[RMDB]
Structure probing data (2A3 and DMS) for a 207-nucleotide construct.

RNA sequence: GGGAACGACUCGAGUAGAGUCGAAAAUUCUCAGCACUCAUCAAGAAGUAGGCUUAGGCCAAUUGCUUGGUGGUGAAAGUAGAGGGAAGGUAGCACUUCGACGCCUCUAAGUAUGCUGUGGGAGUAGAAAACUGGACAUCGUUCGCGAUGUCCAGAACUUACAACCCUAGUUCGCUAGGGUUGUAAGAAAAGAAACAACAACAACAAC
Reactivity to 2A3 in 0.01 (KOAc 150mM, MgCl2 10mM, bicine 150mM(pH8.5), 24C), signal-to-noise 2, nucleotides 027 to 156: u050u000c000u010c010a000g010c030a000c040u170c010a020u020c010a010a010g020a150a040g040u070a020g020g000c000u080u090a140g120g000c000c010a090a070u030u070g040c010u020u000g000g000u020g000g000u020g020a100a030a000g070u060a000g020a040g000g040g020a060a000g050g010u030a010g010c050a020c110u000u020c030g100a060c130g090c020c000u000c000u020a020a010g080u060a060u120g000c030u000g030u130g040g060g000a060g020u160a040g100a100a090a040a090c000u000g000g010a000c000a000u000c000g000u020u040c080g010c000g110a000u000g030u020c010c000a000g000a000a000
Reactivity to DMS in 0.01 (KOAc 150mM, MgCl2 10mM, bicine 150mM(pH8.5), 24C), signal-to-noise 2, nucleotides 027 to 156: u000u000c000u000c000a120g000c040a040c020u000c020a040u010c020a000a040g010a030a020g030u000a120g020g060c000u000u000a180g040g040c010c020a080a090u000u000g020c000u010u000g030g100u000g000g000u000g000a060a080a130g020u000a000g010a070g030g010g010a080a070g010g020u000a160g030c120a250c060u000u000c040g020a100c140g000c030c000u000c050u010a070a150g010u000a030u000g020c010u010g010u000g000g010g000a190g020u010a270g010a070a050a070a180c010u000g020g020a060c010a010u000c000g030u000u000c300g030c050g010a020u000g000u000c000c000a010g010a020a030
Conditions: 150 mM KOAc, 10 mM MgCl2 and 150 mM bicine (pH 8.5), 24 C. High 2A3 reactivity points to a flexible backbone, as in loops and unpaired stretches.